Description:
An RNA of 177 nucleotides, treated with 2A3 and DMS and read out base by base. Reactivities are given for positions 27 through 126. For DMS, 25,285 sequencing reads were counted. The RNA was probed in 150 mM KOAc, 10 mM MgCl2 and 150 mM bicine (pH 8.5) at 24 C. For 2A3, 13,930 sequencing reads were counted. 2A3 is a SHAPE reagent: it acylates the 2'-hydroxyl of flexible nucleotides of all four kinds. In probing experiments dimethyl sulfate is read out at A N1 and C N3, which are open when not base-paired.
RNA sequence: GGGAACGACUCGAGUAGAGUCGAAAAUGCUGGCUGACGAUGGAGAGAGAGGUGCAGUACUCUAUUAUGAUUGUUAGUCCCGCCCGCCGAGCUCCACGUGUGGCGCCCUCAUCGGCGUCUUGCCUCCACACUGAUGAAUUUUCGAAUUCAUCAGUGUAAAAGAAACAACAACAACAAC
Reactivity to 2A3 in 0.01 (KOAc 150mM, MgCl2 10mM, bicine 150mM(pH8.5), 24C), signal-to-noise 7, nucleotides 027 to 126: u110g020c040u040g020g010c010u030g010a010c020g090a140u050g100g000a030g010a000g000a000g010a030g050g020u140g020c020a020g030u070a050c010u010c030u040a120u280u080a120u270g150a120u090u130g050u080u060a020g030u030c030c010c010g000c000c010c010g020c010c020g040a040g030c000u000c010c010a030c010g040u090g040u070g040g000c010g000c010c000c000u070c030a110u120c030g010g000c000g010u010c020u030u060g000c000c000u020c020c000
Reactivity to DMS in 0.01 (KOAc 150mM, MgCl2 10mM, bicine 150mM(pH8.5), 24C), signal-to-noise 9, nucleotides 027 to 126: u010g010c070u010g000g010c020u000g010a050c040g010a120u000g010g010a070g010a090g000a080g010a060g010g020u010g020c080a080g010u000a060c020u000c030u000a080u010u000a110u010g000a100u010u010g010u000u010a060g010u000c030c030c040g010c030c040c020g000c050c030g010a150g010c020u000c020c020a040c070g010u010g020u000g010g000c010g010c010c010c030u010c300a100u010c220g010g010c010g010u000c020u000u000g010c020c010u000c050c080